The record gives the reactivity of an RNA of 177 nucleotides to 2A3 and DMS.
[RMDB]
RNA sequence: GGGAACGACUCGAGUAGAGUCGAAAAGCGUCAAUGGCUUCGGGGUGUUCGUGAUGGCCAAGCUUCACGAAUUCCCAUCGUGUGUGCUCGACGCCCCGCGUGUGGGUGCCAUCGCCGACCUCCUCGCGAGGAUUACGAUAUUCGUAUCGUAAUCCUCAAAAGAAACAACAACAACAAC
Reactivity to 2A3 in 0.01 (KOAc 150mM, MgCl2 10mM, bicine 150mM(pH8.5), 24C), signal-to-noise 9, nucleotides 027 to 126: g020c010g040u070c050a150a230u170g040g010c020u100u050c040g030g000g000g010u030g030u030u010c010g010u020g020a060u080g060g070c100c070a070a040g030c010u030u010c000a000c010g010a040a050u030u020c000c000c010a040u070c020g020u030g010u010g030u060g040c020u040c060g050a050c040g000c000c000c010c000g030c030g010u130g010u130g020g020g010u050g020c020c010a070u060c030g020c050c030g030a040c000c010u020c010c010u030c020g040c050
Reactivity to DMS in 0.01 (KOAc 150mM, MgCl2 10mM, bicine 150mM(pH8.5), 24C), signal-to-noise 3, nucleotides 027 to 126: g020c030g010u000c080a100a070u010g010g020c010u010u010c040g000g000g000g010u020g000u000u010c180g000u010g000a020u020g000g020c070c180a110a180g020c010u000u020c020a000c010g000a010a050u000u000c020c000c000a090u010c020g020u010g000u040g020u010g020c020u000c190g000a100c100g010c000c010c000c040g020c120g000u010g010u030g000g010g010u010g010c010c050a050u000c060g020c050c030g000a040c060c010u000c010c010u020c030g010c270
For DMS, 7,636 sequencing reads were counted. High 2A3 reactivity points to a flexible backbone, as in loops and unpaired stretches. For DMS the reverse transcriptase was MarathonRT. The 2A3 profile rests on 21,537 reads.